[RMDB]
RNA sequence: GGGAACGACUCGAGUAGAGUCGAAAAGAUAUGGAUCAUUACAGAGCUUGACUUAUCGGAAACGAUAAGGAGCGACGAAGUAAUGAGUCCUAAGUCAAACAGAUGGCUUGUUCGCAAGCCAUCUGAACGGAUUAAGACCGUUCGCGGUCUUAAUCCGAAAAGAAACAACAACAACAAC
Reactivity to DMS in 0.01 (KOAc 150mM, MgCl2 10mM, bicine 150mM(pH8.5), 24C), signal-to-noise 1, nucleotides 027 to 126: g030a010u010a030u000g020g010a110u000c000a010u000u000a010c000a030g000a150g010c010u010u000g010a150c000u000u000a010u000c000g020g010a060a030a070c000g010a000u000a000a010g000g030a060g040c000g020a170c240g000a060a140g000u000a000a000u010g010a060g000u010c000c010u000a000a170g010u000c000a110a120a290c020a020g000a020u000g000g020c000u010u000g010u010u030c260g020c000a030a000g000c010c000a000u020c000u000g020a030a160
Reactivity to 2A3 in 0.01 (KOAc 150mM, MgCl2 10mM, bicine 150mM(pH8.5), 24C), signal-to-noise 1, nucleotides 027 to 126: g010a010u020a000u030g000g000a010u030c030a010u040u000a010c020a040g050a030g060c000u070u110g300a290c010u030u000a000u020c000g000g000a000a020a020c000g000a000u010a020a010g000g010a000g000c030g300a300c040g030a030a000g030u000a010a000u010g020a010g120u080c000c000u000a020a000g040u020c030a000a070a160c010a060g010a000u010g010g000c000u020u010g070u180u190c300g020c120a000a010g040c000c000a000u000c000u020g000a030a000

Chemical mapping of a 177-nucleotide RNA with DMS and 2A3. 2A3 adducts were read by reverse transcription with SuperScript II with manganese. DMS adducts were read by reverse transcription with MarathonRT.